[RMDB]
RNA sequence: GGGAACGACUCGAGUAGAGUCGAAAAGAUAUGGAACAUUGGGAGGAACUACGGUCGAUACUCGGAAACGAGUAUAACCGCCAUCGAUCAAUGUUCCUAAGUCAAAACCCUACGUUCGCGUAGGGAACCCUGGCUACUAGUUCGCUAGUAGCCAGGGAAAAGAAACAACAACAACAAC
Reactivity to 2A3 in 0.01 (KOAc 150mM, MgCl2 10mM, bicine 150mM(pH8.5), 24C), signal-to-noise 2, nucleotides 027 to 126: g010a000u040a020u100g000g000a000a000c010a000u000u000g040g060g020a020g100g080a190a190c220u270a090c300g030g030u020c070g100a000u010a000c000u000c000g000g010a000a010a030c000g010a000g030u000a000u000a000a000c000c000g060c050c020a300u300c020g000a010u020c010a010a010u000g010u020u000c000c010u000a010a000g030u020c020a000a040a030a300c010c030c000u020a000c000g030u030u070c300g060c000g170u010a000g010g020g010a020a010
Reactivity to DMS in 0.01 (KOAc 150mM, MgCl2 10mM, bicine 150mM(pH8.5), 24C), signal-to-noise 1, nucleotides 027 to 126: g000a020u000a300u000g000g000a010a000c000a020u000u000g010g000g010a300g000g030a020a040c150u030a090c080g030g010u030c180g010a060u000a000c000u000c030g000g000a000a050a060c000g030a030g000u000a000u010a190a000c020c010g020c140c080a100u000c050g020a300u030c000a030a000u000g000u000u000c000c000u000a020a110g000u000c000a090a150a100a300c000c000c000u000a000c010g000u000u000c230g050c000g010u000a020g000g000g000a000a020